[RMDB]
RNA sequence: GGGAACGACUCGAGUAGAGUCGAAAACAGGACGUUAGCAUAGGUCCAAUUUACUAUGCAGAUUGCAUCGUCGGAGACGACGUAGAGACCGCAACAGCAGGGUCGAUGACCUGCUGAAUUACACCUCUUAUCAUAGCGAGGGAUCAAGCUAUGUACACAUGAGGGAGUAGUUCGCUACUCCCUCAUGAAAAGAAACAACAACAACAAC
Reactivity to 2A3 in 0.01 (KOAc 150mM, MgCl2 10mM, bicine 150mM(pH8.5), 24C), signal-to-noise 3, nucleotides 027 to 156: c000a000g000g050a020c050g060u080u100a010g000c000a020u000a020g020g000u080c020c000a020a010u060u040u030a070c000u020a000u000g020c000a000g060a260u130u150g030c010a070u130c010g040u000c000g020g050a040g000a050c040g000a000c000g000u030a040g010a000g070a120c060c030g030c050a020a020c000a080g000c010a000g120g000g040u090c080g100a120u280g100a040c000c000u000g000c000u000g000a000a000u130u030a070c060a060c060c000u060c010u100u120a070u120c010a000u000a010g000c010g010a010g040g070g040a070u160c050a030a000g010c000u000a000u010g020u030a000c050a000
Reactivity to DMS in 0.01 (KOAc 150mM, MgCl2 10mM, bicine 150mM(pH8.5), 24C), signal-to-noise 2, nucleotides 027 to 156: c050a080g030g020a070c050g000u000u010a200g030c010a020u000a030g050g010u000c060c070a060a130u000u000u000a140c030u000a030u000g010c010a200g020a120u000u000g020c030a120u000c000g010u000c000g020g020a300g010a300c020g010a020c000g060u000a040g030a070g000a070c060c030g000c040a120a150c010a050g010c000a020g010g020g040u000c060g000a190u000g010a080c000c000u000g000c000u000g000a020a060u010u010a110c030a090c050c010u000c010u010u000a140u000c010a010u000a010g000c020g000a150g020g010g000a120u000c060a030a180g000c010u010a020u000g020u000a070c060a190